[RMDB]
RNA sequence: GGGAACGACUCGAGUAGAGUCGAAAACCCACCAAGUUCUUAUCAAGAGAAGCAGAGUGACUGGCACGACGAAGCUUCAGCAACCGGUGUAAUGGCGAAAGCCAUGACCAAGGUGCUAAAUCCAGCAAGCUCGAACAGCUUGGAAGAUAAGAACAGAGACUAGCGGAGUAUUCGUACUCCGCUAGUCAAAAGAAACAACAACAACAAC
Reactivity to 2A3 in 0.01 (KOAc 150mM, MgCl2 10mM, bicine 150mM(pH8.5), 24C), signal-to-noise 2, nucleotides 027 to 156: c020c000c000a020c070c080a150a000g000u000u010c000u000u010a010u010c060a150a030g040a000g000a110a000g000c000a000g000a000g020u000g000a010c010u010g010g000c010a010c000g230a030c000g010a040a000g000c000u000u000c010a000g000c010a020a050c000c000g070g020u110g100u220a050a070u010g000g000c010g020a140a000a000g010c000c030a000u020g020a010c040c000a010a120g000g000u000g000c000u010a000a010a020u020c000c000a020g150c020a200a000g000c010u080c120g070a140a060c050a070g000c000u000u000g010g050a010a030g010a020u010a000a000g000a000a000c010a010g100a010